[RMDB]
RNA sequence: GGGAACGACUCGAGUAGAGUCGAAAAUGUCUGGUACGCCCUAGCCCGCGGAACCCUGACAUUUCCACUAAUGUAAGGGGCUGCCGAAUCUUCACAGGGUUGAAUCUCUGCUCCUCUGGAAGACAGGCUGGAUUAACAUGUUCGCAUGUUAAUCCAGAAAAGAAACAACAACAACAAC
Reactivity to 2A3 in 0.01 (KOAc 150mM, MgCl2 10mM, bicine 150mM(pH8.5), 24C), signal-to-noise 3, nucleotides 027 to 126: u020g010u000c020u040g000g010u030a030c010g040c020c020c020u000a000g010c000c010c020g000c020g020g020a080a040c020c010c050u040g010a010c000a020u020u050u010c030c010a050c060u210a210a200u300g090u210a060a110g160g070g000g000c010u000g010c010c000g030a130a140u000c010u030u040c100a120c010a300g000g040g020u050u080g060a110a090u070c140u020c060u230g040c010u050c010c000u040c010u010g010g000a020a010g010a010c040a010g020g000
Reactivity to DMS in 0.01 (KOAc 150mM, MgCl2 10mM, bicine 150mM(pH8.5), 24C), signal-to-noise 3, nucleotides 027 to 126: u000g000u010c010u010g000g020u010a100c070g010c030c090c100u000a150g000c020c020c060g000c040g000g000a120a030c060c010c170u000g000a040c010a040u000u000u000c040c080a160c280u030a080a080u010g010u000a060a050g030g010g010g010c050u000g010c000c010g000a150a300u000c010u000u000c020a090c020a010g000g000g000u010u000g000a050a080u010c150u020c140u010g010c030u000c050c000u000c010u010g000g010a040a030g000a050c090a260g000g010
Notes: Chemical mapping of a 177-nucleotide RNA with 2A3 and DMS. DMS adducts were read by reverse transcription with MarathonRT. The data come from the RNA Mapping Database (RMDB), library OK2TRN. 2A3 adducts were read by reverse transcription with SuperScript II with manganese.